RNA sequence: GGGAACGACUCGAGUAGAGUCGAAAAGGCCCGACCACCCGAAUACAAUGUGACCCCCACAGGUGCACCGGCCGCCACCGGUGUGAAUAUGGGGCAAGGUACAGCGUUCUACCCGGGCGGCUCCGGCACCCCGUCACAGGUUCGCCUGUGACGGGGUAAAAGAAACAACAACAACAAC
Reactivity to 2A3 in 0.01 (KOAc 150mM, MgCl2 10mM, bicine 150mM(pH8.5), 24C), signal-to-noise 1, nucleotides 027 to 126: g020g050c000c000c000g000a030c010c010a040c010c000c000g020a000a050u200a170c190a110a030u130g030u070g100a070c000c020c020c010c010a000c010a020g100g070u110g040c010a010c000c000g010g010c050c060g020c000c000a010c000c000g010g000u000g000u040g030a030a000u180a100u090g020g000g000g020c010a090a000g010g050u280a020c020a040g070c070g040u070u000c030u080a050c090c050c000g000g010g050c010g000g000c010u040c030c010g010g000c000
An RNA of 177 nucleotides, treated with 2A3 and read out base by base.
For 2A3, 673 sequencing reads were counted.
The reactions ran in a buffer of 150 mM KOAc, 10 mM MgCl2 and 150 mM bicine (pH 8.5), at 24 C.